RNA sequence: GGGAACGACUCGAGUAGAGUCGAAAAAUCUUUCUAUCUUCUCUUCCAAUCUAUUGAUCUGCCCUUCCAAUACUAUCAGAUCAAUAGAUUGGAAGAGCAGAUCGAAAAAUGCUCUCACCUUAAGGAGGAGUCUCUGUCACUUCGGUGACAGAGACUCAAAAGAAACAACAACAACAAC
Reactivity to 2A3 in 0.01 (KOAc 150mM, MgCl2 10mM, bicine 150mM(pH8.5), 24C), signal-to-noise 1, nucleotides 027 to 126: a010u050c000u000u000u000c000u000a010u000c000u000u000c000u010c000u020u000c000c000a000a010u020c000u010a000u000u010g000a000u000c000u000g050c010c080c110u060u110c100c040a110a190u160a220c040u100a060u300c020a010g000a000u000c000a000a000u010a000g000a000u000u000g020g020a000a000g030a000g000c000a000g000a010u000c000g040a000a000a000a000a040u090g000c020u020c050u000c000a100c000c080u110u110a140a050g080g030a060g010